Structure probing data (DMS and 2A3) for a 177-nucleotide construct. The DMS profile rests on 1,808 reads. The reactions ran in a buffer of 150 mM KOAc, 10 mM MgCl2 and 150 mM bicine (pH 8.5), at 24 C. It was measured as part of the RMDB library TTRDES.
[RMDB]
RNA sequence: GGGAACGACUCGAGUAGAGUCGAAAAGAUAUGGAUCAUGGGAGCGAUAAGCGUGACCUCGGAAACGAGGUGACGCUUUUGACGCUUAGUGAUCCUAAGUCAAAAGUUGUCCCUUCGGGGACAACAAGGUAGCAUAACACUUCGGUGUUAUGCUACCAAAAGAAACAACAACAACAAC
Reactivity to DMS in 0.01 (KOAc 150mM, MgCl2 10mM, bicine 150mM(pH8.5), 24C), signal-to-noise 2, nucleotides 027 to 126: g020a030u000a300u000g000g010a010u000c010a000u000g020g020g000a030g000c000g040a150u030a010a020g030c000g030u000g000a010c000c010u000c000g000g000a090a050a130c020g010a010g010g000u000g010a010c010g010c000u010u000u010u010g020a240c010g040c000u010u010a300g000u000g010a030u000c000c000u000a030a090g000u000c030a090a090a090a120g000u000u010g010u000c000c000c000u000u000c220g050g000g000g000a000c000a000a000c020a040a080
Reactivity to 2A3 in 0.01 (KOAc 150mM, MgCl2 10mM, bicine 150mM(pH8.5), 24C), signal-to-noise 1, nucleotides 027 to 126: g040a020u050a020u160g000g010a000u000c030a020u020g300g300g090a010g000c020g030a080u040a150a020g000c000g000u010g130a000c000c010u010c000g070g030a110a070a000c010g000a030g000g000u020g010a000c000g000c020u030u010u010u020g030a000c000g030c000u010u000a000g010u010g000a010u000c000c000u010a170a010g000u030c050a010a030a070a160g020u000u000g000u000c000c000c000u000u000c300g030g010g000g010a000c010a020a000c000a000a030